[RMDB]
RNA sequence: GGGAACGACUCGAGUAGAGUCGAAAAUACUUAGUACGCGCGUAGUUGCAGGCAUUCCGGGUGUAGCAACUGACGCGGAAGACUUUUCCCAGAGUGUGCGCUUCAACUGGCGUGCUGAGUAGUGCACGAAUUGCACGUACGUUCGCGUACGUGCAAAUUAUAAUACAGUGUUCGCACUGUAUUAUAAAAAAGAAACAACAACAACAAC
Reactivity to 2A3 in 0.01 (KOAc 150mM, MgCl2 10mM, bicine 150mM(pH8.5), 24C), signal-to-noise 6, nucleotides 027 to 156: u100a000c000u000u010a000g000u010a010c000g000c010g010c010g020u010a000g000u000u000g000c010a120g190g000c010a030u100u130c120c150g150g110g020u020g010u020a010g010c020a010a010c000u070g100a050c020g010c030g010g020a010a000g170a080c030u190u180u050u020c000c000c000a000g010a000g020u110g000u010g010c030g000c020u040u080c070a300a300c120u020g020g000c010g000u010g000c000u010g000a010g000u050a000g010u010g000c010a000c020g020a030a080u050u020g000c000a000c000g010u000a000c000g000u010u070c220g000c010g060u000a000c000g010u000g000c000a000a000a000
Reactivity to DMS in 0.01 (KOAc 150mM, MgCl2 10mM, bicine 150mM(pH8.5), 24C), signal-to-noise 5, nucleotides 027 to 156: u000a040c060u010u000a080g020u000a070c030g030c000g030c030g040u000a050g010u000u000g010c000a070g010g010c010a030u000u000c020c300g010g010g100u000g010u000a190g020c000a030a020c010u000g010a050c010g020c010g010g000a070a110g010a100c140u000u000u000u000c000c000c000a240g000a130g020u000g020u000g020c040g010c020u000u000c060a100a130c080u000g030g020c040g020u000g040c000u010g000a050g020u000a060g040u010g000c020a080c030g010a090a190u000u000g000c000a010c000g000u010a010c000g020u000u010c300g040c020g030u000a010c010g000u000g010c010a000a000a020